[RMDB]
RNA sequence: GGGAACGACUCGAGUAGAGUCGAAAAGAUAUGGACGCUUGGACCACAACGUGAGUGCGAUGAAAUCGGAAACGAUGGAGCACUCUGUGCUAGCGUCCUAAGUCAAAGUUGUCGUUCGCGACAACAACCGACUAUAGAAGUUCGCUUCUAUAGUCGGAAAAGAAACAACAACAACAAC
Reactivity to 2A3 in 0.01 (KOAc 150mM, MgCl2 10mM, bicine 150mM(pH8.5), 24C), signal-to-noise 6, nucleotides 027 to 126: g020a010u060a030u130g000g000a000c000g020c030u070u170g060g100a170c120c030a070c100a260a090c150g210u150g080a020g000u000g040c040g150a300u090g100a140a110a010u040c010g010g010a060a040a040c010g010a000u010g000g020a020g000c000a000c000u000c000u000g000u020g020c020u020a000g000c010g010u000c000c000u010a060a000g020u000c050a110a050a110g000u000u020g010u000c020g030u060u140c300g010c020g160a000c000a000a000c000a010a020
Reactivity to DMS in 0.01 (KOAc 150mM, MgCl2 10mM, bicine 150mM(pH8.5), 24C), signal-to-noise 6, nucleotides 027 to 126: g000a060u010a300u010g010g000a010c000g030c010u000u000g040g020a120c230c130a070c120a080a110c250g020u000g000a010g020u000g000c000g020a140u010g000a050a110a010u000c000g010g000a090a060a170c000g010a020u000g000g010a110g000c000a010c010u000c000u000g000u000g000c020u000a020g000c010g000u000c000c000u000a010a060g010u000c040a090a090a120g010u000u000g000u010c010g010u000u010c240g010c030g010a010c010a000a010c020a090a150